[RMDB]
This 207-nucleotide RNA was probed chemically with 2A3 and DMS. The reactions ran in a buffer of 150 mM KOAc, 10 mM MgCl2 and 150 mM bicine (pH 8.5), at 24 C. DMS adducts were read by reverse transcription with MarathonRT. The 2A3 profile rests on 837 reads.
RNA sequence: GGGAACGACUCGAGUAGAGUCGAAAAUAACCCCUAUACUUGUAUAGGCGAUUAAUAAAUCUUCUGUAAAUGCUGUAAGAGGAUUACCCCUUGAGGUUUCAGCAGUAGGCUGCUCUAGCGAUUAAUCACAACGAUUUGGUCUUCGGACCAAAUCGAACAUUGUGAUGUCGUUCGCGACAUCACAAUGAAAAGAAACAACAACAACAAC
Reactivity to 2A3 in 0.01 (KOAc 150mM, MgCl2 10mM, bicine 150mM(pH8.5), 24C), signal-to-noise 2, nucleotides 027 to 156: u050a060a080c000c000c000c020u030a020u020a130c060u090u180g060u040a030u050a040g020g010c040g100a080u050u100a160a040u100a170a080a050u060c030u080u020c020u000g120u130a080a150a090u180g050c040u050g090u100a040a020g020a000g010g030a020u020u060a040c010c010c000c030u010u020g060a120g070g010u100u120u170c030a010g000c020a050g020u110a050g160g000c010u000g020c020u020c080u120a020g030c000g060a040u010u140a060a040u070c070a020c020a070a140c070g000a000u000u000u000g000g000u000c000u050u060c150g020g000a000c000c000a000a000a000u000c000g000a020a000
Reactivity to DMS in 0.01 (KOAc 150mM, MgCl2 10mM, bicine 150mM(pH8.5), 24C), signal-to-noise 1, nucleotides 027 to 156: u000a100a180c020c010c040c020u010a040u000a020c030u030u010g030u010a020u000a020g010g020c030g000a130u000u000a010a110u000a060a080a080u010c000u000u010c010u010g010u000a060a150a070u000g010c040u010g010u000a170a110g020a010g000g000a130u000u000a040c040c010c010c040u020u000g020a150g020g020u000u010u000c040a060g030c050a110g040u000a090g010g010c000u000g010c000u000c060u000a130g030c050g000a150u000u000a070a150u010c080a070c040a080a300c010g000a010u000u000u000g010g010u000c000u010u010c300g070g020a020c010c000a020a000a000u010c000g000a060a110